[RMDB]
Annotation
Structure probing data (2A3) for a 177-nucleotide construct. It was measured as part of the RMDB library OK1LIB. The RNA was probed in 150 mM KOAc, 10 mM MgCl2 and 150 mM bicine (pH 8.5) at 24 C. The 2A3 profile rests on 692 reads.

RNA sequence: GGGAACGACUCGAGUAGAGUCGAAAAGAAUUUACAUUCCAAAGCUCGAGCCUGAAAGAAUUGUCUCGAUCUUGGAGUGGGAUAGAAGCAAAGAGCUUAUGCAUCGCACCGAGGCGAUCUGUGCAGCCCCAGUCCUCAACUUCGGUUGAGGACUGGGAAAAGAAACAACAACAACAAC
Reactivity to 2A3 in 0.01 (KOAc 150mM, MgCl2 10mM, bicine 150mM(pH8.5), 24C), signal-to-noise 2, nucleotides 027 to 126: g120a010a070u110u080u030a100c000a090u010u050c020c010a030a010a000g000c010u000c000g010a010g000c000c010u060g040a010a250a080g100a110a190u300u120g040u040c000u040c000g000a000u010c000u000u040g000g000a000g010u070g000g010g010a000u060a080g130a090a000g050c040a160a180a000g050a000g010c010u220u160a100u250g010c020a120u120c020g000c010a040c150c080g040a010g120g000c080g070a060u000c040u060g090u100g000c000a010g020c000